[RMDB]
RNA sequence: GGGAACGACUCGAGUAGAGUCGAAAAUAACAAACCUCGUUUCGGAGGUGAGCUAAGGCUUCCCCCUUCUGAGGAGGGGGUUAGCCCAUACGAAGUGGUCGGGUAUUUGAUUUUAGGGGUGGUCCUGGAGCAUGUAUGUAUUCGUACAUACAUGCUCAAAAGAAACAACAACAACAAC
Reactivity to DMS in 0.01 (KOAc 150mM, MgCl2 10mM, bicine 150mM(pH8.5), 24C), signal-to-noise 8, nucleotides 027 to 126: u000a090a110c090a090a170a060c010c000u000c010g020u000u010u010c190g020g000a010g000g000u000g000a140g010c090u000a100a110g010g000c000u000u000c020c000c000c000c000u000u000c010u010g020a150g020g010a010g020g010g000g000g010u010u000a000g010c010c000c080a050u000a200c100g000a100a120g010u010g010g000u000c080g020g000g000u000a080u000u010u010g000a130u000u010u000u000a120g000g000g020g010u000g010g010u010c060c070u000g000
Reactivity to 2A3 in 0.01 (KOAc 150mM, MgCl2 10mM, bicine 150mM(pH8.5), 24C), signal-to-noise 5, nucleotides 027 to 126: u130a020a010c050a040a090a010c010c000u010c030g060u100u170u190c090g150g000a010g020g000u000g000a000g010c050u080a110a020g000g000c000u010u000c000c000c010c000c000u020u050c040u140g260a170g010g050a010g000g030g010g000g000u020u020a000g000c010c000c000a050u110a050c030g060a100a010g020u040g050g080u100c070g050g030g000u040a160u100u130u150g150a130u030u160u120u210a050g000g000g020g020u040g030g030u060c010c070u060g060
Source: RMDB library OK2TRN, as collected in RNAgym. The record gives the reactivity of an RNA of 177 nucleotides to DMS and 2A3. The DMS profile rests on 12,621 reads.